Structure probing data (2A3) for a 207-nucleotide construct. Conditions: 150 mM KOAc, 10 mM MgCl2 and 150 mM bicine (pH 8.5), 24 C.
RNA sequence: GGGAACGACUCGAGUAGAGUCGAAAACUCGCUGUUUUUGUGGCUGGCUUUCAGCGGGCUGGAGGAGCCGGGAGCGGAGGCGGAAGACCGAGCCAAAAACGUCAGCCGAGGCCGGGCGGCCCCGCUCAAAAUCUUCGUAUCUUCGGAUACGAAGAAACCAAAUGUAAGAGUUCGCUCUUACAUUUGGAAAAGAAACAACAACAACAAC
Reactivity to 2A3 in 0.01 (KOAc 150mM, MgCl2 10mM, bicine 150mM(pH8.5), 24C), signal-to-noise 2, nucleotides 027 to 156: c010u030c010g010c020u030g030u050u080u040u090u060g070u060g080g000c000u010g030g000c020u010u100u090c030a010g000c100g000g030g010c010u060g020g060a080g040g030a000g040c020c090g070g070g000a010g000c010g020g020a140g040g030c040g020g030a070a000g020a040c010c020g020a060g000c010c010a090a070a020a070a040c050g020u070c030a010g000c010c010g000a020g010g000c020c000g000g030g030c000g020g030c000c000c000c010g040c010u000c020a060a090a030a080u000c000u000u000c000g000u000a000u000c010u030u060c230g120g000a010u000a000c000g000a000a000g000a010a000a000
Record summary
For 2A3 the reverse transcriptase was SuperScript II with manganese. It was measured as part of the RMDB library M2RFPK.